The data come from the RNA Mapping Database (RMDB), library OK1LIB. The record gives the reactivity of an RNA of 177 nucleotides to 2A3. Conditions: 150 mM KOAc, 10 mM MgCl2 and 150 mM bicine (pH 8.5), 24 C.

RNA sequence: GGGAACGACUCGAGUAGAGUCGAAAAUCGCCGUAUGCGCAGACACGAAAAAUGAUCAUUGGCUGUUACCCACCUCCAACAGGGUAAGUCCGGACGAGGUUCAAUGGACACUUACGUUACGUCGGCGCCGUGGGGCGUACUUCGGUACGCCCCACGGAAAAGAAACAACAACAACAAC
Reactivity to 2A3 in 0.01 (KOAc 150mM, MgCl2 10mM, bicine 150mM(pH8.5), 24C), signal-to-noise 1, nucleotides 027 to 126: u110c000g000c030c020g030u080a120u100g030c030g020c010a000g030a000c020a000c000g070a250a000a000a000a000u180g040a170u000c050a040u080u050g010g000c040u040g140u060u050a080c010c010c000a010c000c000u030c010c000a050a160c040a080g010g000g030u140a110a080g080u010c020c020g010g000a010c000g090a030g000g000u080u210c000a050a030u220g050g020a010c000a030c160u050u080a070c090g020u050u030a020c030g070u000c040g050g000c000g080